[RMDB]
About this RNA
Chemical mapping of a 177-nucleotide RNA with DMS and 2A3.

RNA sequence: GGGAACGACUCGAGUAGAGUCGAAAACUUUUAAAUUUAAACUAGACCUACCUAGAAGUAAUCCUACCAUCCCCGCUGGCAUCAUCUGACUGGAGACAGCAACCUUCUUUAACAGUCCCAUUACAAAGAAUCACUGACUAUUCGUAGUCAGUGAUUCAAAAGAAACAACAACAACAAC
Reactivity to DMS in 0.01 (KOAc 150mM, MgCl2 10mM, bicine 150mM(pH8.5), 24C), signal-to-noise 1, nucleotides 027 to 126: c040u000u030u000u030a000a040a090u000u030u020a080a090a180c040u030a140g000a070c050c020u000a060c090c040u000a020g010a060a140g000u000a090a130u010c000c040u000a100c080c050a050u000c050c000c010c140g000c130u000g020g010c090a050u010c040a040u020c060u000g020a050c050u000g000g010a140g000a050c030a040g010c020a050a100c040c030u000u000c000u000u030u000a060a070c040a110g020u000c000c010c060a090u000u000a140c210a090a100a210
Reactivity to 2A3 in 0.01 (KOAc 150mM, MgCl2 10mM, bicine 150mM(pH8.5), 24C), signal-to-noise 1, nucleotides 027 to 126: c020u080u070u180u300a080a220a300u200u280u120a270a230a060c010u000a000g050a060c000c000u030a060c050c040u040a030g010a130a000g030u070a010a060u050c030c030u020a100c090c000a060u050c000c000c060c030g030c060u060g010g020c000a040u030c010a000u040c130u100g020a100c030u010g000g000a100g030a000c010a000g000c000a030a060c000c000u000u150c030u090u090u000a080a080c010a030g050u080c010c000c000a040u080u030a090c060a070a150a020
For DMS, 595 sequencing reads were counted. The RNA was probed in 150 mM KOAc, 10 mM MgCl2 and 150 mM bicine (pH 8.5) at 24 C. For 2A3 the reverse transcriptase was SuperScript II with manganese. The 2A3 profile rests on 554 reads.